[RMDB]
RNA sequence: GGGAACGACUCGAGUAGAGUCGAAAAGCUCGGAGACGAGCAAGGCUGACAAAACGAUGUCCCAACCUCCACGUGGUGUCGGCUGGAUAAUGCUGCAUUAUGUUGCAUUUAUCAACUGGGAACGAAAGCUCACUAAUAUCUUCGGAUAUUAGUGAGCAAAAGAAACAACAACAACAAC
Reactivity to 2A3 in 0.01 (KOAc 150mM, MgCl2 10mM, bicine 150mM(pH8.5), 24C), signal-to-noise 9, nucleotides 027 to 126: g000c000u010c010g030g030a120g010a050c010g000a000g000c010a010a070g030g000c000u010g000a000c010a020a090a040a030c050g070a090u110g040u040c010c000c000a010a040c010c030u040c020c040a150c110g070u150g010g010u010g010u010c000g000g000c010u010g010g000a010u000a030a010u010g000c020u020g000c020a090u120u140a140u300g020u010u020g000c010a010u060u070u110a020u030c000a000a030c040u050g000g010g030a040a020c020g070a090a020a020
Reactivity to DMS in 0.01 (KOAc 150mM, MgCl2 10mM, bicine 150mM(pH8.5), 24C), signal-to-noise 4, nucleotides 027 to 126: g010c010u000c000g000g000a270g000a210c000g000a000g040c020a140a040g000g010c000u000g000a010c030a070a090a120a080c050g010a160u010g000u000c000c000c030a080a130c080c020u010c090c030a300c070g040u010g020g030u010g030u030c020g010g030c030u000g030g010a040u000a010a010u020g030c030u000g010c000a200u030u090a100u010g030u000u000g000c010a020u010u000u000a020u000c010a060a040c130u050g010g000g000a100a020c080g010a080a130a150

Source information:
The record gives the reactivity of an RNA of 177 nucleotides to 2A3 and DMS.